[RMDB]
RNA sequence: GGGAACGACUCGAGUAGAGUCGAAAAUAUUCGGCGGCACUGCAAGCGUUUCUUUCCGCCGAGCUAUCCGAGGCAUAGGGUCGGGCGGUAUGGCACUCAAGGUAGAGAUGGUCACUUUCGACUGCAGCGACCAUAGGUAUUUCGAUACCUAUGGUCGAAAAGAAACAACAACAACAAC
Reactivity to 2A3 in 0.01 (KOAc 150mM, MgCl2 10mM, bicine 150mM(pH8.5), 24C), signal-to-noise 2, nucleotides 027 to 126: u170a060u040u010c010g010g000c020g000g000c070a000c100u060g020c050a080a060g140c040g090u000u040u030c000u030u040u000c000c000g000c010c000g000a000g010c000u020a040u120c030c020g050a100g000g030c060a090u140a090g120g030g050u050c030g000g030g000c030g000g040u170a120u090g040g000c010a000c050u060c040a070a060g130g030u110a040g030a000g000a060u060g070g050u020c000a020c100u080u190u110c060g070a050c050u070g000c020a000g040
Reactivity to DMS in 0.01 (KOAc 150mM, MgCl2 10mM, bicine 150mM(pH8.5), 24C), signal-to-noise 3, nucleotides 027 to 126: u010a150u010u000c010g000g000c000g000g010c300a080c010u000g020c080a230a110g000c120g050u000u000u000c030u010u010u000c010c010g000c010c000g000a020g020c200u000a020u010c030c040g010a100g010g000c050a070u000a120g000g010g020u010c020g000g000g000c030g000g010u010a050u020g000g000c020a080c050u010c060a080a070g010g010u000a080g000a100g000a040u010g010g000u000c010a040c110u000u000u000c060g000a080c110u000g030c080a060g020